[RMDB]
RNA sequence: GGGAACGACUCGAGUAGAGUCGAAAAGGUCGGCUUCGAGAACCUUACCAAGUUCGGUGAGGAGUCAGGCAACGACGAUACGGUCUAUAUCCGCAAUGAGAAGCGUGAGAUCGAAUACGAAGUCCUUCGCGAUCCUGGCAAAUACAGCCAUAACGUCGAAACGACUCUUAUUCGUAAGAGUCGUUUCAAAAGAAACAACAACAACAAC
Reactivity to DMS in 0.01 (KOAc 150mM, MgCl2 10mM, bicine 150mM(pH8.5), 24C), signal-to-noise 2, nucleotides 027 to 156: g030g040u010c000g000g010c020u000u020c030g020a160g030a070a100c010c010u000u000a100c000c080a170a280g020u000u000c100g000g020u000g030a090g020g000a140g000u000c070a100g020g010c030a050a080c030g000a030c090g000a130u000a070c020g000g020u000c000u000a180u000a100u030c020c010g040c000a050a130u010g030a240g000a110a200g020c020g030u010g000a150g000a070u000c000g020a160a190u000a180c070g000a130a170g010u000c070c030u000u000c010g020c000g000a080u010c010c040u020g010g030c010a040a090a090u010a070c140a100g020c030c020a070u000a040a050c070g000u010c100
Reactivity to 2A3 in 0.01 (KOAc 150mM, MgCl2 10mM, bicine 150mM(pH8.5), 24C), signal-to-noise 4, nucleotides 027 to 156: g070g020u050c020g020g010c010u040u060c050g080a100g020a160a090c000c000u020u010a000c010c000a050a150g300u240u300c220g010g000u000g000a010g000g000a050g060u030c030a030g060g060c060a110a040c050g030a010c010g010a030u060a140c020g000g010u000c030u010a090u020a060u200c080c020g000c030a050a100u240g040a130g060a300a030g010c020g020u040g000a020g000a020u020c020g000a030a030u110a100c020g020a040a010g080u090c010c050u040u050c040g030c010g070a040u030c000c010u000g000g000c020a000a060a100u150a120c040a050g040c010c030a040u110a080a020c090g060u070c010